[RMDB]
RNA sequence: GGGAACGACUCGAGUAGAGUCGAAAAAUCGGUCAAACAUCGCCAUCAAUGCCGGUACCAGCACCAGCCGCACGACGGUGGCGUCCACGGCGAUCGCGACCGCGCACGCCACGCCGAUCUCGGCCACAUCGAUACGUGACUUCGGUCACGUAUCGAUAAAAGAAACAACAACAACAAC
Reactivity to DMS in 0.01 (KOAc 150mM, MgCl2 10mM, bicine 150mM(pH8.5), 24C), signal-to-noise 1, nucleotides 027 to 126: a100u000c070g010g000u030c090a100a100a130c230a030u000c020g000c050c010a110u020c080a080a090u000g020c080c000g000g000u000a050c070c030a050g000c070a060c130c070a080g000c010c010g050c230a070c050g020a130c120g010g020u000g000g030c000g000u010c090c090a000c050g000g000c000g050a070u000c300g030c170g010a130c030c020g000c020g010c200a070c040g000c030c010a070c110g030c000c010g000a150u010c100u000c010g000g000c000c080a070c170
Reactivity to 2A3 in 0.01 (KOAc 150mM, MgCl2 10mM, bicine 150mM(pH8.5), 24C), signal-to-noise 1, nucleotides 027 to 126: a000u040c010g010g020u000c000a000a000a180c040a070u000c000g050c050c010a040u060c060a090a140u140g050c030c000g000g020u020a070c020c000a010g030c030a000c010c030a000g020c000c020g040c000a060c150g050a010c000g010g020u050g030g000c000g020u020c050c010a040c050g000g040c060g020a110u140c120g000c030g270a250c040c000g000c000g050c000a030c030g010c030c000a030c020g020c080c050g040a210u040c050u000c030g040g000c060c000a030c010
Chemical mapping of a 177-nucleotide RNA with DMS and 2A3. For DMS, 675 sequencing reads were counted. The RNA was probed in 150 mM KOAc, 10 mM MgCl2 and 150 mM bicine (pH 8.5) at 24 C. For DMS the reverse transcriptase was MarathonRT. The 2A3 profile rests on 1,222 reads.